[RMDB]
RNA sequence: GGGAACGACUCGAGUAGAGUCGAAAAGAUAUGGACGUGAGCCAUGAACUACCUUAUCGGAUCGGAAACGAUCCGUAAGAGGCAUGGCAAGACCAGUCCUAAGUCAAAAGCAAGCUUCGGCUUGCAACAGAUGAUUGGACUUCGGUCCAAUCAUCUGAAAAGAAACAACAACAACAAC
Reactivity to DMS in 0.01 (KOAc 150mM, MgCl2 10mM, bicine 150mM(pH8.5), 24C), signal-to-noise 1, nucleotides 027 to 126: g030a040u000a150u010g020g000a050c000g000u000g020a300g000c000c000a000u000g000a100a080c170u000a240c090c000u000u000a130u060c040g000g000a000u010c000g030g000a060a090a100c000g010a000u000c000c000g030u010a000a060g000a080g000g000c010a010u000g000g030c020a070a180g000a200c080c010a180g000u000c000c000u000a000a190g050u010c090a080a150a040a170g000c000a030a000g000c000u020u020c170g020g020c010u000u000g010c000a080a070
Reactivity to 2A3 in 0.01 (KOAc 150mM, MgCl2 10mM, bicine 150mM(pH8.5), 24C), signal-to-noise 1, nucleotides 027 to 126: g020a000u120a020u140g020g000a010c050g060u050g060a020g000c000c000a000u010g040a100a150c100u180a180c290c020u000u020a060u220c030g010g000a010u020c000g050g000a020a030a050c000g020a000u090c000c010g000u010a050a020g020a010g000g070c000a030u020g000g050c010a010a000g160a030c080c110a050g010u020c000c010u030a080a040g030u030c000a010a000a110a120g000c000a010a020g040c000u070u220c300g190g000c030u040u010g000c010a000a000
Overview:
The data come from the RNA Mapping Database (RMDB), library TTRDEL. This 177-nucleotide RNA was probed chemically with DMS and 2A3. The RNA was probed in 150 mM KOAc, 10 mM MgCl2 and 150 mM bicine (pH 8.5) at 24 C. DMS adducts were read by reverse transcription with MarathonRT.